[RMDB]
RNA sequence: GGGAACGACUCGAGUAGAGUCGAAAACGUCGCGUGUGCAUGACAGGAUCCCCGUCAGCUGCAACAAGCGGCUCAAGCGCGAGUUCCGCGCGCGCAAGAGCCUCGCAGGGGUGGGGCUGCAGCCUGAAACUGCAUCGCCUUUCGAGGCGAUGCAGUUAAAAGAAACAACAACAACAAC
Reactivity to DMS in 0.01 (KOAc 150mM, MgCl2 10mM, bicine 150mM(pH8.5), 24C), signal-to-noise 1, nucleotides 027 to 126: c110g020u000c020g010c040g030u010g020u000g000c030a120u000g010a170c050a060g000g010a070u040c030c010c000c040g010u000c060a010g000c020u000g010c000a080a190c120a050a130g050c300g000g000c030u000c040a040a300g000c010g040c000g010a020g050u000u020c120c120g010c050g000c000g040c000g010c010a070a300g000a050g000c000c000u000c170g020c040a070g000g000g030g010u000g000g000g000g010c300u000g010c110a020g000c220c030u000g000a130